[RMDB]
RNA sequence: GGGAACGACUCGAGUAGAGUCGAAAAUCUGGUCGGGGAGUUACCCAAUCAUUUUCAUAGCAUAAGGAUUGGUACUUGUGGAAAUCAGGGCUAAUCUCCAACAAGGAUAGACCAGCAGAUGCUAAGACAAGCAUUGAUCGUUCGCGAUCAAUGCUUGAAAAGAAACAACAACAACAAC
Reactivity to DMS in 0.01 (KOAc 150mM, MgCl2 10mM, bicine 150mM(pH8.5), 24C), signal-to-noise 1, nucleotides 027 to 126: u000c000u010g000g000u000c000g050g000g030g010a240g010u000u000a070c000c030c000a180a060u010c120a080u000u000u000u000c030a110u000a000g060c030a030u010a090a100g020g000a060u000u020g000g000u000a150c000u000u000g050u010g000g000a050a010a020u000c120a120g010g000g000c130u010a060a030u000c030u010c000c000a020a070c010a030a030g000g000a120u000a130g000a010c000c000a020g030c110a090g000a030u000g010c020u010a020a010g000a160
Reactivity to 2A3 in 0.01 (KOAc 150mM, MgCl2 10mM, bicine 150mM(pH8.5), 24C), signal-to-noise 1, nucleotides 027 to 126: u000c000u030g090g110u010c030g030g010g060g020a020g000u000u080a300c000c010c000a000a030u120c080a050u070u220u200u230c080a070u060a000g000c010a030u060a140a220g070g000a170u000u060g040g020u030a020c030u000u000g010u000g030g020a010a090a010u080c050a170g000g000g000c020u010a010a000u000c010u000c020c000a070a180c030a080a060g010g010a110u020a200g100a090c000c000a000g000c000a040g020a120u000g010c020u030a080a000g000a030